This 177-nucleotide RNA was probed chemically with 2A3 and DMS. 2A3 adducts were read by reverse transcription with SuperScript II with manganese. It was measured as part of the RMDB library RFMREP. Conditions: 150 mM KOAc, 10 mM MgCl2 and 150 mM bicine (pH 8.5), 24 C. The DMS profile rests on 3,841 reads.
[RMDB]
RNA sequence: GGGAACGACUCGAGUAGAGUCGAAAACGGGCGUCGAACAACCGACUCAGAACUGGUACGGACAAGGGGAAUCCGACUGUUUAAUUAAAACAAAGCAUUGCGAUGGUCCCCACGGAUGCUGACGCAACCGUGGGUAUAGGUUCGCCUAUACCCACGGAAAAGAAACAACAACAACAAC
Reactivity to 2A3 in 0.01 (KOAc 150mM, MgCl2 10mM, bicine 150mM(pH8.5), 24C), signal-to-noise 5, nucleotides 027 to 126: c000g020g080g010c030g010u030c020g070a060a040c020a050a040c040c020g070a060c030u060c160a060g040a180a040c070u110g020g020u150a110c020g020g050a030c060a130a180g000g020g000g000a010a030u010c010c010g020a030c040u010g020u040u030u040a110a150u080u110a040a030a040a060c040a050a100a000g050c010a030u020u220g110c070g080a050u030g080g110u050c000c000c010c020a000c010g010g000a020u040g000c050u050g030a010c010g010c040a020a020
Reactivity to DMS in 0.01 (KOAc 150mM, MgCl2 10mM, bicine 150mM(pH8.5), 24C), signal-to-noise 4, nucleotides 027 to 126: c110g010g010g010c040g010u020c020g020a060a110c110a100a170c060c020g010a100c110u020c100a100g000a100a090c120u010g000g010u000a130c070g010g000a060c080a060a130g010g010g010g020a150a140u000c010c000g010a040c100u000g010u000u010u000a050a080u020u010a080a060a050a100c180a060a070a090g010c010a020u000u000g010c080g010a110u000g000g020u010c030c010c010c050a170c090g000g000a040u000g000c040u010g000a080c080g010c050a090a070